[RMDB]
RNA sequence: GGGAACGACUCGAGUAGAGUCGAAAAUCGCUCCAGGUUUCCCAGGGGAUCCCUGAAGCGCUCCUCCGAGCCGCCUUCUUUUUUCUUUUCUGCUCAGGAGGUCAGGUGUGAACCACAGGAACCACGAGUUUAGUUCCGAGGAACCAACUGCGGUUCCCACGUCGUUAAUGUUCGCAUUAACGACGUGAAAAGAAACAACAACAACAAC
Reactivity to 2A3 in 0.01 (KOAc 150mM, MgCl2 10mM, bicine 150mM(pH8.5), 24C), signal-to-noise 1, nucleotides 027 to 156: u250c000g000c040u000c010c000a030g030g000u080u110u080c030c040c030a040g010g040g010g000a000u010c000c000c000u030g010a080a020g180c060g120c170u080c000c000u000c050c050g000a000g050c000c030g120c130c000u240u210c150u110u230u220u080u200u130c180u180u300u100u080c040u070g020c000u000c050a090g010g000a010g010g010u020c000a000g030g040u100g050u000g270a020a050c000c010a020c070a100g010g010a000a000c020c000a000c010g010a010g000u010u030u140a020g000u010u000c000c000g030a050g010g000a000a000c000c000a050a180c230u280g010c140g020g000u000u010c000c000